This 177-nucleotide RNA was probed chemically with DMS and 2A3. The reactions ran in a buffer of 150 mM KOAc, 10 mM MgCl2 and 150 mM bicine (pH 8.5), at 24 C. For 2A3, 733 sequencing reads were counted.
RNA sequence: GGGAACGACUCGAGUAGAGUCGAAAACUCAUGUAUCAGACUCUAGGUACGAUCCACAGCUAGGACGAUCCUAGAGUACUCGACACUAGGCUAGGGAUCGUACGGAUCGCGUACUAGUGAUCAUAUCUAUUUUGAGUGCGUUCGCGCACUCAAAAUAAAAAGAAACAACAACAACAAC
Reactivity to DMS in 0.01 (KOAc 150mM, MgCl2 10mM, bicine 150mM(pH8.5), 24C), signal-to-noise 2, nucleotides 027 to 126: c020u000c030a120u020g000u030a110u000c090a130g000a050c050u000c040u020a070g010g030u000a160c010g010a090u010c000c020a070c150a130g040c150u000a130g010g030a040c020g010a290u000c050c010u010a020g000a040g000u000a020c060u000c110g030a170c050a050c030u010a040g000g000c060u010a220g020g010g020a020u000c010g010u020a100c130g000g000a040u020c020g010c100g010u010a060c040u000a040g000u000g000a060u000c060a030u000a050u020c130
Reactivity to 2A3 in 0.01 (KOAc 150mM, MgCl2 10mM, bicine 150mM(pH8.5), 24C), signal-to-noise 1, nucleotides 027 to 126: c010u010c040a090u110g110u180a220u200c090a050g060a100c020u000c020u090a040g100g000u200a110c020g050a300u000c010c010a100c070a040g110c110u260a090g010g010a070c010g060a060u000c010c000u060a000g110a050g010u000a000c000u010c000g030a030c010a010c040u080a070g170g000c010u140a010g120g020g020a000u000c040g010u160a160c140g160g000a020u020c040g000c030g230u110a140c020u010a020g000u000g000a000u010c000a030u020a030u040c040